[RMDB]
RNA sequence: GGGAACGACUCGAGUAGAGUCGAAAAGCGUUUAGCUUCGGCUAAACGCAAAUAAGGUGACCAGCUAUGAGGUCAUACAUCGUCAUAGCACAAAGAAAGAGAAAACACCUCUGUUCGCAGAGGUGAAUCAGACAAUAUUGUUCGCAAUAUUGUCUGAAAAAGAAACAACAACAACAAC
Reactivity to 2A3 in 0.01 (KOAc 150mM, MgCl2 10mM, bicine 150mM(pH8.5), 24C), signal-to-noise 9, nucleotides 027 to 126: g000c000g000u000u000u000a010g000c000u030u040c170g080g000c000u000a000a000a000c000g000c000a000a010a000u020a010a010g240g030u090g010a010c000c000a000g010c000u010a010u020g020a010g010g010u010c040a020u160a150c050a090u160c160g070u000c000a000u000a010g040c040a010c040a020a100a020g210a100a080a010g160a020g060a050a080a030a000c010a000c000c000u000c010u010g030u060u070c240g000c060a000g000a000g000g000u000g010a000a010
Reactivity to DMS in 0.01 (KOAc 150mM, MgCl2 10mM, bicine 150mM(pH8.5), 24C), signal-to-noise 7, nucleotides 027 to 126: g010c000g010u000u010u000a000g000c000u000u010c220g020g020c000u000a000a010a010c000g020c000a010a030a040u010a080a100g010g020u000g020a030c010c010a180g010c010u000a010u000g010a030g010g020u000c030a180u000a090c240a050u010c140g000u000c010a010u000a010g010c010a230c300a060a070a080g010a060a080a070g000a110g000a090a070a090a160c010a010c000c000u000c000u000g000u010u010c150g020c010a020g010a010g000g000u000g000a010a060
This 177-nucleotide RNA was probed chemically with 2A3 and DMS. For DMS the reverse transcriptase was MarathonRT. Values cover nucleotides 27 to 126. For 2A3, 23,334 sequencing reads were counted. The data come from the RNA Mapping Database (RMDB), library M2PK50. The reactions ran in a buffer of 150 mM KOAc, 10 mM MgCl2 and 150 mM bicine (pH 8.5), at 24 C. For DMS, 9,153 sequencing reads were counted.